RNA sequence: GGGAACGACUCGAGUAGAGUCGAAAAGCCAGAUAUCUGGCAUCGCGCGUUGGCAAUCAGCAAAGUCUUAGUCCUUCCCUUUUUUUUCUGUUUCGAAGCGCGCAAUGUACAAACAAAGAGGACUUAGACUCCAUAACUUGUUCGCAAGUUAUGGAGUAAAAGAAACAACAACAACAAC
Reactivity to DMS in 0.01 (KOAc 150mM, MgCl2 10mM, bicine 150mM(pH8.5), 24C), signal-to-noise 3, nucleotides 027 to 126: g010c000c000a010g020a300u020a120u010c050u010g000g010c000a060u000c090g020c020g010c010g020u000u000g000g020c150a090a060u010c070a050g030c260a090a070a080g010u000c030u020u010a030g000u010c000c030u000u000c010c020c010u010u000u000u000u000u010u000u000c050u000g000u020u000u000c030g000a080a090g010c000g000c010g020c010a050a030u000g000u000a070c150a090a070a050c200a020a090a110g000a060g010g000a040c030u000u000a050g010
Reactivity to 2A3 in 0.01 (KOAc 150mM, MgCl2 10mM, bicine 150mM(pH8.5), 24C), signal-to-noise 2, nucleotides 027 to 126: g030c010c000a000g040a070u280a110u210c030u020g040g000c000a020u040c050g010c000g000c010g010u020u020g070g050c090a020a070u050c010a140g040c000a000a150a050g020u040c000u050u080a000g010u000c000c000u000u070c000c000c000u120u100u010u000u000u000u000u070c010u040g040u030u020u020c060g050a050a010g000c020g010c000g000c030a000a050u140g020u050a110c050a120a140a000c010a030a080a050g090a040g050g010a010c000u010u030a030g000